This 177-nucleotide RNA was probed chemically with DMS. The RNA was probed in 150 mM KOAc, 10 mM MgCl2 and 150 mM bicine (pH 8.5) at 24 C. DMS adducts were read by reverse transcription with MarathonRT.
RNA sequence: GGGAACGACUCGAGUAGAGUCGAAAAUUGAGUAAGUUUUUAGAUGAAUUAAUCUUAAAUGCAGUUGCCAAAAAUAGUCAACUACAAGUUGUUUGCUUACGCUUUUUUAAUGUGGCAGGUGCAAUUCGAGAAAGGAUGAUUUCGAUCAUCCUUUCUCAAAAGAAACAACAACAACAAC
Reactivity to DMS in 0.01 (KOAc 150mM, MgCl2 10mM, bicine 150mM(pH8.5), 24C), signal-to-noise 2, nucleotides 027 to 126: u000u000g020a040g020u000a020a050g000u000u000u000u000u000a070g010a030u000g000a190a100u000u020a130a190u000c000u000u000a040a080a160u000g000c010a030g000u000u000g000c020c020a060a100a080a070a110u000a040g010u000c050a030a020c040u000a040c180a040a100g020u000u000g000u000u010u020g000c000u000u000a020c080g010c030u000u020u030u010u010u000a030a130u000g020u000g000g000c050a000g000g020u000g000c040a030a160u000u010c150